Chemical mapping of a 207-nucleotide RNA with 2A3. Source: RMDB library OK3TST, as collected in RNAgym. The reactions ran in a buffer of 150 mM KOAc, 10 mM MgCl2 and 150 mM bicine (pH 8.5), at 24 C.
[RMDB]
RNA sequence: GGGAACGACUCGAGUAGAGUCGAAAAAGUGCCGCGAAUACCAAGCACUUUAGUGAUUAUAUCCUUUGCAUCAUCAAAUGAAGUAGGUUUUUCGCGUAAUACAGCUUCAGCAACCUUCCAAAUAUUACCCUUACCACCCAUGAUGGCGGCACGAUUGGCGAUUGUGCGUAUUCGUACGCACAAUCGCAAAAGAAACAACAACAACAAC
Reactivity to 2A3 in 0.01 (KOAc 150mM, MgCl2 10mM, bicine 150mM(pH8.5), 24C), signal-to-noise 2, nucleotides 027 to 156: a010g000u000g030c030c000g010c000g020a080a050u110a070c070c000a040a000g040c030a070c000u070u100u050a090g000u070g060a030u110u200a080u080a080u150c040c000u120u170u180g070c020a050u030c000a020u050c010a050a120a210u130g020a150a000g010u070a070g020g040u010u020u000u050u140c030g000c000g020u010a020a020u150a130c050a110g030c030u050u070c060a060g000c030a040a010c000c040u030u080c140c090a050a210a020u100a040u130u120a110c000c000c000u090u020a060c090c040a050c000c000c010a020u110g070a030u080g230g010c030g000g000c060a000c010g010a030u060u100g080